Source: RMDB library M2PK50, as collected in RNAgym. The record gives the reactivity of an RNA of 177 nucleotides to 2A3 and DMS. For DMS the reverse transcriptase was MarathonRT. For 2A3, 2,083 sequencing reads were counted. Reactivities are given for positions 27 through 126. The DMS profile rests on 1,387 reads.
RNA sequence: GGGAACGACUCGAGUAGAGUCGAAAAGGCGGCUAGUUCGCUAGCCGCCAAAGUGCACAGUCGCCAGCCAAGUGCACAAAAUAAAAGAUAAGGUAGGCGACAAAAGAGGGGCGUUCGCGCCCCUCAAGGACAUAAAUCAGUUCGCUGAUUUAUGUCCAAAAGAAACAACAACAACAAC
Reactivity to 2A3 in 0.01 (KOAc 150mM, MgCl2 10mM, bicine 150mM(pH8.5), 24C), signal-to-noise 1, nucleotides 027 to 126: g010g000c010g010g000c010u000a010g030u020u010c110g000c070u010a000g000c000c000g020c000c000a000a010a000g000u000g000c020a000c040a030g000u000c000g020c010c000a040g070c010c020a180a000g010u000g020c040a010c040a000a100a010a010u070a000a060a000a010g100a050u090a120a060g020g040u080a050g020g000c010g010a010c000a000a110a000a010g040a000g010g030g010g000c000g040u020u080c170g020c000g010c080c000c000c000u020c000a000a000
Reactivity to DMS in 0.01 (KOAc 150mM, MgCl2 10mM, bicine 150mM(pH8.5), 24C), signal-to-noise 1, nucleotides 027 to 126: g010g020c000g010g010c000u000a010g000u000u010c190g040c000u000a020g010c000c000g010c000c000a000a000a060g010u010g030c000a010c010a090g000u010c010g000c000c010a250g000c010c010a090a110g020u010g020c000a000c020a040a030a050a080u070a090a080a110a080g010a150u030a110a100g010g010u000a110g000g000c000g010a010c040a100a030a070a110g000a010g020g000g010g010c000g030u000u010c150g040c020g000c000c000c020c000u000c010a000a010